An RNA of 177 nucleotides, treated with 2A3 and DMS and read out base by base. DMS adducts were read by reverse transcription with MarathonRT. Values cover nucleotides 27 to 126. Values are in units of 0.01, from 0 to 300, in steps of 10.

[RMDB]
RNA sequence: GGGAACGACUCGAGUAGAGUCGAAAAGCUAGCCACAUGUGUCAAGAGCAUCGCAAGCGUCACACAUCCUUGUGAUGCGUUAGAGCUUUUCGUGCGAGACGAGCACGGUUGUCUCUGUGGCAGCCAAGGGUUUUUCAUACUUCGGUAUGAAAAACCCAAAAGAAACAACAACAACAAC
Reactivity to 2A3 in 0.01 (KOAc 150mM, MgCl2 10mM, bicine 150mM(pH8.5), 24C), signal-to-noise 2, nucleotides 027 to 126: g040c000u030a000g010c000c010a010c000a020u180g070u040g040u190c030a060a030g010a000g090c000a130u000c040g000c020a020a020g020c050g090u040c020a050c020a020c000a230u130c020c050u000u000g020u030g000a000u010g000c010g020u020u050a000g000a000g020c010u000u040u070u120c020g000u000g030c000g010a110g050a270c080g090a040g000c000a000c000g010g000u020u020g030u020c020u000c000u030g000u000g020g030c040a000g010c030c010a200a270
Reactivity to DMS in 0.01 (KOAc 150mM, MgCl2 10mM, bicine 150mM(pH8.5), 24C), signal-to-noise 2, nucleotides 027 to 126: g000c000u000a070g000c000c010a000c010a010u060g000u000g050u010c160a030a050g030a070g000c000a020u000c000g010c080a040a030g090c120g000u000c060a030c300a120c250a030u010c170c000u000u030g000u000g000a050u000g000c030g030u000u030a140g000a080g010c020u000u000u000u020c000g010u000g010c030g000a290g050a060c150g000a300g050c000a000c020g010g020u040u000g050u030c000u000c000u000g020u010g000g000c000a000g000c000c080a070a130